[RMDB]
RNA sequence: GGGAACGACUCGAGUAGAGUCGAAAAGACGAGCACGUCCAGUGGUACCGCAUGUACGGCAUGAGCAUGCGGCCGGUGCCGGCGACCUGGGAGGAGUUUCAGGACUACUGGGACCACAUGUGCCGCAAAUUUAAGGGGUAUUCGUACCCCUUAAAUUAAAAGAAACAACAACAACAAC
Reactivity to DMS in 0.01 (KOAc 150mM, MgCl2 10mM, bicine 150mM(pH8.5), 24C), signal-to-noise 9, nucleotides 027 to 126: g010a120c030g010a130g010c040a030c030g010u000c050c060a130g020u000g000g010u000a160c030c010g000c040a030u000g000u010a100c080g010g010c050a050u000g010a250g000c030a040u000g010c010g010g010c050c050g010g010u000g010c030c010g000g020c210g000a090c020c010u000g000g000g010a040g010g020a140g010u000u000u000c030a030g000g010a180c100u000a070c040u000g000g000g010a060c030c050a070c120a080u010g010u000g000c010c010g010c140a060
Reactivity to 2A3 in 0.01 (KOAc 150mM, MgCl2 10mM, bicine 150mM(pH8.5), 24C), signal-to-noise 4, nucleotides 027 to 126: g050a030c050g010a040g060c030a000c030g020u040c050c020a040g020u040g070g020u050a050c020c000g050c030a030u050g030u070a060c060g050g040c110a100u100g030a010g030c030a020u040g010c000g020g000c000c020g040g010u070g090c030c010g000g010c010g020a040c010c010u020g010g030g020a060g100g060a110g100u010u040u020c020a020g000g040a060c030u060a010c010u110g020g010g030a030c010c020a040c000a060u100g010u030g010c000c000g010c020a030

An RNA of 177 nucleotides, treated with DMS and 2A3 and read out base by base. 2A3 adducts were read by reverse transcription with SuperScript II with manganese. The reactions ran in a buffer of 150 mM KOAc, 10 mM MgCl2 and 150 mM bicine (pH 8.5), at 24 C.